This 177-nucleotide RNA was probed chemically with DMS and 2A3. As a SHAPE reagent, 2A3 marks flexible, mostly unpaired nucleotides at the ribose 2'-OH. Source: RMDB library M2PK90, as collected in RNAgym. Values are in units of 0.01, from 0 to 300, in steps of 10. Values cover nucleotides 27 to 126. DMS adducts were read by reverse transcription with MarathonRT.
[RMDB]
RNA sequence: GGGAACGACUCGAGUAGAGUCGAAAAUUAUUGAGCGUAGAUGUCUCUGUCACGAUACCAGUAAGUGACUCUCGUGUACUACUGGCGAAUGAGACAGAGACAUUAUAUGCUCGUGCCAGUCAAUAAACUGAUUUAAUCUAUUCGUAGAUUAAAUCAGAAAAGAAACAACAACAACAAC
Reactivity to DMS in 0.01 (KOAc 150mM, MgCl2 10mM, bicine 150mM(pH8.5), 24C), signal-to-noise 8, nucleotides 027 to 126: u000u010a060u010u010g010a010g020c000g040u000a030g000a020u000g000u000c000u000c000u000g000u010c000a100c050g010a250u010a080c010c010a010g010u000a030a060g010u000g000a030c020u010c240u010c260g010u000g010u000a030c010u000a040c000u000g000g010c030g010a080a090u010g000a090g000a030c000a000g000a010g000a010c000a000u000u000a050u000a020u000g000c000u000c010g010u010g000c040c020a150g010u010c120a060a090u010a060a080a170
Reactivity to 2A3 in 0.01 (KOAc 150mM, MgCl2 10mM, bicine 150mM(pH8.5), 24C), signal-to-noise 7, nucleotides 027 to 126: u160u090a050u060u230g010a000g010c000g000u000a010g000a010u010g000u000c000u000c010u000g010u010c000a000c090g030a020u070a090c000c000a000g000u050a260a050g010u070g120a050c000u020c020u020c120g220u210g020u050a010c010u000a000c000u010g000g000c030g060a110a170u170g010a030g010a070c000a000g000a010g000a000c000a000u000u000a010u000a000u000g000c010u000c010g000u020g040c010c010a080g090u150c050a060a160u170a220a170a100